Chemical mapping of a 207-nucleotide RNA with 2A3 and DMS. High DMS reactivity at an A or C suggests that its Watson-Crick edge is free. It was measured as part of the RMDB library OK3TST. The reactions ran in a buffer of 150 mM KOAc, 10 mM MgCl2 and 150 mM bicine (pH 8.5), at 24 C. For 2A3, 1,207 sequencing reads were counted.
RNA sequence: GGGAACGACUCGAGUAGAGUCGAAAAUAAAGGCCUUACAGACAUUGGAGGAAAAGGUUAUUCGUGGUGGCGUAUCAAGUUGCAUUUUAGAAAUGAUAUAUCAUUCAUGUUGUGAUGACGUUAGUAAAUUAUCCAAAACAUUGCAAAAGGGCAAAAACUUGUUUUAAAUUUUCGAAUUUAAAACAAGAAAAGAAACAACAACAACAAC
Reactivity to 2A3 in 0.01 (KOAc 150mM, MgCl2 10mM, bicine 150mM(pH8.5), 24C), signal-to-noise 2, nucleotides 027 to 156: u090a000a130a020g070g000c030c000u030u050a040c020a080g090a000c020a030u060u140g020g020a020g020g000a030a020a010a080g050g010u090u050a070u050u200c090g010u040g030g000u030g010g000c000g030u040a010u170c030a010a050g040u060u110g030c040a080u020u040u150u110a120g010a040a050a010u080g000a000u040a020u030a020u110c020a000u070u060c020a020u040g000u060u020g000u070g030a040u040g010a000c060g020u020u010a010g020u060a030a050a070u150u070a040u060c010c000a000a020a120a080c020a050u030u090g000c000a020a020a100a070g000g010g040c030a050a000a150a000a040
Reactivity to DMS in 0.01 (KOAc 150mM, MgCl2 10mM, bicine 150mM(pH8.5), 24C), signal-to-noise 2, nucleotides 027 to 156: u000a090a140a130g010g020c020c020u000u010a130c070a100g010a050c030a060u000u040g000g000a070g020g010a050a070a070a110g010g030u000u000a090u000u000c030g040u010g010g030u000g000g020c000g040u000a060u000c030a020a220g020u010u000g020c020a070u000u000u000u000a160g000a080a060a100u000g010a080u000a050u000a100u000c020a020u000u040c040a070u010g020u000u000g010u000g010a050u010g010a050c030g000u000u000a120g010u000a090a060a100u010u020a090u010c040c030a030a080a050a060c060a090u000u010g010c040a020a050a060a130g010g030g050c040a030a050a070a100a060